RNA sequence: GGGAACGACUCGAGUAGAGUCGAAAACGCCGCCGGCAUCGUGCGCAACGGUCCGAUCUCGCGCGCCGAGGUCGAGGCGAUGAUGACCGCGGCCGCCGAUGACGCACAGAAGCGCGUCGAGAUCGCGCUCACGUCUCGCGAGGUGAAGGCACGCGGCAUAGGAGUAUAGCUUCGGCUAUACUCCUAUAAAAGAAACAACAACAACAAC
Reactivity to DMS in 0.01 (KOAc 150mM, MgCl2 10mM, bicine 150mM(pH8.5), 24C), signal-to-noise 1, nucleotides 027 to 156: c030g040c000c020g000c030c000g000g050c050a090u000c020g000u000g080c030g060c000a080a120c070g010g010u000c000c190g000a110u000c030u000c020g070c280g020c030g050c030c010g010a030g000g050u010c040g000a100g000g010c000g010a040u000g000a130u000g020a090c000c000g000c050g010g000c030c030g040c020c070g100a100u010g000a050c020g060c080a120c060a180g010a100a110g000c000g050c030g030u000c040g020a200g050a120u000c000g050c010g030c050u010c010a140c040g010u000c000u010c040g020c040g000a080g020g000u020g000a120a100g020g000c030a100c160g020c000g070g000c040
Reactivity to 2A3 in 0.01 (KOAc 150mM, MgCl2 10mM, bicine 150mM(pH8.5), 24C), signal-to-noise 3, nucleotides 027 to 156: c010g000c010c000g050c070c020g020g000c020a000u010c020g180u180g040c020g010c070a080a060c070g090g060u150c190c100g040a110u040c080u030c030g000c000g000c020g030c020c030g030a010g030g000u010c000g000a020g000g020c050g020a010u130g020a010u060g020a090c000c000g000c000g030g050c000c010g010c010c020g040a070u160g000a040c000g060c040a070c010a200g170a190a040g040c000g010c010g010u100c040g020a060g030a060u140c020g000c000g010c060u020c020a060c000g030u010c020u060c040g060c050g100a080g000g060u150g040a080a120g020g000c100a090c080g000c000g050g010c000
The record gives the reactivity of an RNA of 207 nucleotides to DMS and 2A3.
It was measured as part of the RMDB library OK3TST.
For DMS, 2,179 sequencing reads were counted.
The 2A3 profile rests on 1,213 reads.
The RNA was probed in 150 mM KOAc, 10 mM MgCl2 and 150 mM bicine (pH 8.5) at 24 C.